[RMDB]
RNA sequence: GGGAACGACUCGAGUAGAGUCGAAAAUUAAAAUUUGCCAGAAUGAAAAAGAAGUAUCCUCCAGUGAGCCUCAAGGACAGCCAGGGAAGGCAGCUACUGGGACCUGCCACUGGCCAGGAUUGAGAGAGCGGAUCAAUUAGUUCGCUAAUUGAUCCGCAAAAGAAACAACAACAACAAC
Reactivity to DMS in 0.01 (KOAc 150mM, MgCl2 10mM, bicine 150mM(pH8.5), 24C), signal-to-noise 1, nucleotides 027 to 126: u050u000a000a090a000a170u000u000u100g000c000c010a140g000a250a040u010g000a110a070a050a210a030g000a140a100g000u000a040u010c000c000u010c000c040a070g000u010g000a120g010c130c250u030c050a040a060g000g000a040c160a190g010c000c000a050g000g000g000a110a090g010g050c000a000g000c050u030a080c110u000g000g000g020a040c290c030u000g000c020c000a090c020u000g000g000c040c050a080g010g000a120u000u000g000a120g000a020g010a120
Reactivity to 2A3 in 0.01 (KOAc 150mM, MgCl2 10mM, bicine 150mM(pH8.5), 24C), signal-to-noise 1, nucleotides 027 to 126: u020u030a000a000a000a040u010u020u090g080c030c000a010g100a300a210u100g070a050a280a120a000a000g100a090a000g010u180a010u060c020c020u000c030c000a010g000u020g110a070g000c080c020u070c030a010a060g010g040a100c000a020g040c000c000a000g010g050g030a060a070g080g000c000a020g000c040u080a000c190u030g050g050g000a020c000c070u010g090c020c000a030c000u000g000g000c000c000a040g030g000a000u020u150g000a060g000a000g000a000